[RMDB]
RNA sequence: GGGAACGACUCGAGUAGAGUCGAAAACCCAAAGUGUGGAUUAAGUGCGAUCGAAGGUGGUCCCGAGCCCUAGACAGCCGGGAGGUGAGCUUAGAAGCAGCUACCCUCUAAGAAAAGCGUAACAGCUCGUCUCCAUUAUAUUCGUAUAAUGGAGACGAAAAGAAACAACAACAACAAC
Reactivity to DMS in 0.01 (KOAc 150mM, MgCl2 10mM, bicine 150mM(pH8.5), 24C), signal-to-noise 4, nucleotides 027 to 126: c020c000c010a080a090a080g030u020g010u010g010g010a080u000u010a050a100g030u020g010c050g000a060u020c090g010a110a170g020g030u000g010g020u010c000c050c010g010a170g000c000c030c020u010a150g000a090c140a130g000c040c070g000g000g010a030g010g000u000g000a050g000c010u000u010a080g010a130a150g010c240a050g010c010u000a040c070c020c010u000c020u000a110a090g010a080a070a050a070g000c030g010u000a120a080c040a110g020c060u000
Reactivity to 2A3 in 0.01 (KOAc 150mM, MgCl2 10mM, bicine 150mM(pH8.5), 24C), signal-to-noise 7, nucleotides 027 to 126: c020c000c000a010a090a020g130u130g020u080g030g070a100u100u130a140a030g030u030g060c020g030a050u040c020g030a070a050g080g000u040g030g030u020c010c010c010g020a030g000c020c000c000u090a110g020a110c020a030g030c030c020g020g020g030a010g000g100u160g030a010g000c020u050u060a050g030a190a020g050c070a000g020c000u110a140c010c010c000u000c010u010a030a030g040a050a110a010a000g020c030g020u070a090a030c020a080g000c020u010